[RMDB]
RNA sequence: GGGAACGACUCGAGUAGAGUCGAAAACUAUCUCAGAUGUUUUUCAGGAUGAAGAGUCCAGGCUCUGAAUAAUGAAAAGUAGAUAAGAUGUAAGUCGUAACAAGGUUGCGGUCGGUGAACCAGCCGCCCCAUACAAUCUUUUCGAAGAUUGUAUGGGAAAAGAAACAACAACAACAAC
Reactivity to 2A3 in 0.01 (KOAc 150mM, MgCl2 10mM, bicine 150mM(pH8.5), 24C), signal-to-noise 9, nucleotides 027 to 126: c010u020a020u030c020u000c030a060g030a120u060g070u020u000u000u030u050c020a020g020g020a050u040g030a020a030g010a000g030u000c060c070a080g170g000c000u010c000u000g030a050a040u060a040a020u040g020a010a020a010a010g040u070a010g020a080u070a080a070g010a030u070g090u170a070a080g070u050c030g020u050a050a050c070a180a080g130g010u060u040g020c020g020g020u090c030g030g080u110g060a090a090c020c000a000g000c000c000g010c010
Reactivity to DMS in 0.01 (KOAc 150mM, MgCl2 10mM, bicine 150mM(pH8.5), 24C), signal-to-noise 9, nucleotides 027 to 126: c040u010a030u000c020u000c040a040g000a170u010g000u000u000u000u000u000c010a030g000g020a030u000g000a180a020g010a040g010u000c030c190a160g010g010c010u000c000u000g000a260a020u000a030a040u000g000a010a010a010a020g010u010a010g000a150u000a050a020g000a020u000g000u010a080a070g010u010c030g010u000a060a100c100a110a120g000g000u000u010g010c060g010g010u010c040g010g020u020g010a160a120c040c030a180g010c010c010g010c160